This 207-nucleotide RNA was probed chemically with 2A3 and DMS. The reactions ran in a buffer of 150 mM KOAc, 10 mM MgCl2 and 150 mM bicine (pH 8.5), at 24 C.

[RMDB]
RNA sequence: GGGAACGACUCGAGUAGAGUCGAAAAAUCUGAUGAAUCAGAGGCGCAUAAUAUACGACCUGUCACGUCCCAUUACAAUAUAUAUAUUUGCACCAAGGUGUCUGAACGCAGACAGAAGCAGUGACGUGGCCGGCAGGUGGACACAAAGGCUGGCAGAAGCAGUGAAAAUGUUCGCAUUUUCACUGCUAAAAGAAACAACAACAACAAC
Reactivity to 2A3 in 0.01 (KOAc 150mM, MgCl2 10mM, bicine 150mM(pH8.5), 24C), signal-to-noise 2, nucleotides 027 to 156: a000u010c020u020g030a030u090g090a090a100u100c030a010g020a050g020g010c040g000c050a070u070a180a060u120a090u040a080c030g080a180c030c010u020g020u030c030a010c020g010u010c000c030c000a030u120u130a030c020a020a020u010a000u030a000u020a000u010a110u300u060u070g080c050a030c030c050a090a060g130g000u060g010u000c010u020g030a130a110c120g000c210a010g060a050c020a040g020a070a010g030c040a000g000u030g060a010c000g020u030g000g000c030c000g010g000c010a010g060g000u050g040g010a000c000a000c000a100a050a000g040g000c000u030g030g020c040a040g030a120
Reactivity to DMS in 0.01 (KOAc 150mM, MgCl2 10mM, bicine 150mM(pH8.5), 24C), signal-to-noise 1, nucleotides 027 to 156: a100u010c020u000g010a150u000g000a060a200u000c030a060g020a120g050g040c040g040c010a050u000a150a040u020a070u000a060c000g010a060c000c020u000g060u000c030a030c010g000u010c020c020c020a080u010u000a100c030a070a130u000a070u010a160u010a100u010a070u000u000u000g000c000a080c000c010a120a130g020g020u010g000u000c010u010g000a070a100c130g050c000a010g030a090c070a110g000a080a090g010c040a080g000u000g010a050c060g010u000g000g010c000c080g040g030c030a040g020g050u000g020g010a100c010a070c020a110a020a160g020g030c010u000g010g000c000a070g000a140